The record gives the reactivity of an RNA of 177 nucleotides to DMS and 2A3.
DMS adducts were read by reverse transcription with MarathonRT.
The RNA was probed in 150 mM KOAc, 10 mM MgCl2 and 150 mM bicine (pH 8.5) at 24 C.

RNA sequence: GGGAACGACUCGAGUAGAGUCGAAAACACUGAGUCUUCGGACUCAGUGAAAAGCUCGAAAAGCACCAAAACGAGCAAUAACAUAAAUAAAGGUCCAAAUAAAAAGUCUAGCGUUCGCGCUAGACAACAAUGUCGAUAGGUUCGCCUAUCGACAUUGAAAAGAAACAACAACAACAAC
Reactivity to DMS in 0.01 (KOAc 150mM, MgCl2 10mM, bicine 150mM(pH8.5), 24C), signal-to-noise 2, nucleotides 027 to 126: c000a020c000u010g000a020g040u000c000u020u010c140g020g010a010c010u000c010a020g000u010g000a020a090a100a180g000c000u000c000g000a040a090a130a120g030c210a060c100c060a030a060a100a150c010g010a020g000c020a080a040u010a050a080c110a090u000a010a040a030u000a010a110a130g000g000u010c050c100a070a060a050u010a050a060a140a110a090g010u000c000u000a010g010c010g010u000u020c220g010c010g000c010u010a020g000a000c010a040a080
Reactivity to 2A3 in 0.01 (KOAc 150mM, MgCl2 10mM, bicine 150mM(pH8.5), 24C), signal-to-noise 2, nucleotides 027 to 126: c010a010c000u000g000a000g000u010c010u040u100c150g000g000a000c000u000c000a010g000u000g000a000a000a000a020g000c000u000c000g090a210a050a060a080g110c090a110c040c020a010a040a060a140c000g000a010g010c040a010a020u130a080a010c030a020u160a110a130a020u160a050a120a020g080g010u050c040c030a000a100a050u180a060a160a040a040a020g010u020c010u010a000g010c010g020u050u060c300g020c000g000c100u010a000g000a000c000a000a000